[RMDB]
RNA sequence: GGGAACGACUCGAGUAGAGUCGAAAACUUCAUCGGCACCGCCGAACACGACCCGCUGCGUGACGACGGGGCCCGUUAUGCCGAGUUGCUCACUGCCGCGCGGAUAGCGGCCGAGUGGUGCAACGAGAGCUCACCUGGGUUUCGACCCAGGUGAGCUAAAAGAAACAACAACAACAAC
Reactivity to 2A3 in 0.01 (KOAc 150mM, MgCl2 10mM, bicine 150mM(pH8.5), 24C), signal-to-noise 3, nucleotides 027 to 126: c020u190u130c050a140u080c010g010g000c020a020c050c040g010c020c000g090a190a080c020a000c030g140a130c030c000c100g060c130u130g000c010g000u030g040a040c020g010a010c000g000g030g010g030c020c010c020g200u190u130a120u140g020c000c000g020a050g030u000u000g000c000u000c020a000c010u010g000c000c000g000c010g010c040g220g050a110u160a100g000c000g040g000c050c010g040a030g020u010g000g060u170g000c000a000a000c020g020a040g000
Reactivity to DMS in 0.01 (KOAc 150mM, MgCl2 10mM, bicine 150mM(pH8.5), 24C), signal-to-noise 2, nucleotides 027 to 126: c020u000u030c050a070u040c090g000g060c070a120c010c000g010c010c000g000a110a010c000a050c040g010a210c020c080c110g040c070u000g000c090g010u000g000a190c020g000a010c000g080g010g000g040c000c010c100g010u070u000a050u000g010c010c000g020a170g000u000u000g000c000u000c000a000c000u000g000c010c000g050c020g020c210g060g020a200u050a100g010c030g030g010c140c300g010a010g000u000g000g000u040g000c000a000a020c000g000a070g010
Chemical mapping of a 177-nucleotide RNA with 2A3 and DMS.